RNA sequence: GGGAACGACUCGAGUAGAGUCGAAAACUCGCUGUUUUUGUGGCUGGCUUUCCGCGGGCUGGAGGAGCCGGGAGCGGAGGCGGAGGACCGAGCCAAAAACGUCAGCCGAGGCCGGGCGGCCCCGCUCAAAAUCUUCGUAUCUUCGGAUACGAAGAAACUAAUGACAGAGCUUCGGCUCUGUCAUUAGAAAAGAAACAACAACAACAAC
Reactivity to 2A3 in 0.01 (KOAc 150mM, MgCl2 10mM, bicine 150mM(pH8.5), 24C), signal-to-noise 2, nucleotides 027 to 156: c010u020c020g040c020u030g030u040u040u010u030u070g030u040g020g070c030u020g000g020c020u070u050u000c020c000g010c080g050g040g000c110u110g010g020a040g020g030a010g020c020c020g050g020g000a020g000c040g000g060a170g020g000c030g020g070a070g040g020a020c030c050g030a020g000c000c000a120a060a020a010a000c030g080u060c040a030g050c040c020g010a030g000g000c020c010g020g050g030c040g040g010c000c000c010c010g010c000u030c030a070a090a050a090u000c000u000u000c000g000u000a000u000c010u030u040c260g110g010a000u000a000c000g000a000a000g000a010a010a000
An RNA of 207 nucleotides, treated with 2A3 and read out base by base. Source: RMDB library M2RFPK, as collected in RNAgym. For 2A3 the reverse transcriptase was SuperScript II with manganese.